Source: RMDB library RFMREP, as collected in RNAgym.
The record gives the reactivity of an RNA of 177 nucleotides to 2A3 and DMS.
The DMS profile rests on 5,888 reads.
Conditions: 150 mM KOAc, 10 mM MgCl2 and 150 mM bicine (pH 8.5), 24 C.
RNA sequence: GGGAACGACUCGAGUAGAGUCGAAAACGUGGCCCCUUUUCUCGUGCGGCGGCCUGCAUCCGUUCAGUUGCUGAUGGAAUCGCUGCCGCACUGCUUGAAGCAAAUCCCCGCCGAGCCGGAGGCCGGAUCAUCCUAUCUACUUCGGUAGAUAGGAUGAAAAAGAAACAACAACAACAAC
Reactivity to 2A3 in 0.01 (KOAc 150mM, MgCl2 10mM, bicine 150mM(pH8.5), 24C), signal-to-noise 3, nucleotides 027 to 126: c060g080u090g040g040c010c000c010c060u020u050u120u030c050u030c030g010u010g000c000g020g010c020g010g000c000c030u060g010c010a020u000c020c040g060u080u100c070a140g020u280u140g240c070u050g050a020u030g020g100a070a010u160c030g010c000u020g010c000c010g000c010a000c000u000g010c000u040u090g040a080a000g000c030a030a060a220u060c030c000c000c000g020c020c000g010a010g000c030c000g060g040a050g060g000c040c030g000g010a010
Reactivity to DMS in 0.01 (KOAc 150mM, MgCl2 10mM, bicine 150mM(pH8.5), 24C), signal-to-noise 4, nucleotides 027 to 126: c120g010u010g000g000c010c010c020c050u000u010u010u000c030u010c070g010u000g000c010g010g020c010g010g020c020c080u010g020c190a080u000c000c030g030u000u010c050a080g020u000u000g040c070u000g010a030u000g000g010a040a140u000c190g010c000u000g000c000c000g000c000a010c000u000g010c060u010u000g010a110a100g010c110a050a110a120u010c030c020c010c110g010c060c020g000a080g010c090c140g000g000a100g020g020c000c020g000g000a140